[RMDB]
RNA sequence: GGGAACGACUCGAGUAGAGUCGAAAAGUUGCCACGCAGGCAUUUCACGUUGGCUAACGAGCACUUUGGGCAUACAAUGCUCUUAUUCCGACGCUGCAUGUCCAAAAGAGAAGGCCAUAUUAAAACCUCCUGAUCAUGGUUUCGACCAUGAUCAGGAAAAAGAAACAACAACAACAAC
Reactivity to 2A3 in 0.01 (KOAc 150mM, MgCl2 10mM, bicine 150mM(pH8.5), 24C), signal-to-noise 3, nucleotides 027 to 126: g090u080u030g010c030c010a050c130g210c100a090g090g020c040a030u070u050u100c140a100c090g030u050u030g000g000c000u010a070a040c040g020a060g130c070a030c000u010u020u000g000g010g020c000a010u050a020c010a010a090u120g020c030u000c000u000u230a300u300u070c020c040g010a030c100g010c020u010g000c000a000u020g010u000c000c000a000a060a000a060g090a010g010a020a030g030g010c000c020a060u140a080u100u300a080a120a020a030c000c000
Reactivity to DMS in 0.01 (KOAc 150mM, MgCl2 10mM, bicine 150mM(pH8.5), 24C), signal-to-noise 2, nucleotides 027 to 126: g000u010u000g010c010c000a090c110g000c070a300g000g000c040a060u060u060u040c000a160c100g010u000u030g010g060c060u030a030a200c080g000a260g070c100a110c130u000u000u010g000g020g000c000a000u000a090c070a000a030u000g000c230u000c000u000u000a100u020u030c100c050g000a000c000g000c060u000g000c080a000u000g000u030c000c000a020a000a060a060g000a140g010a020a200g000g000c010c000a010u000a050u030u050a110a060a020a130c100c090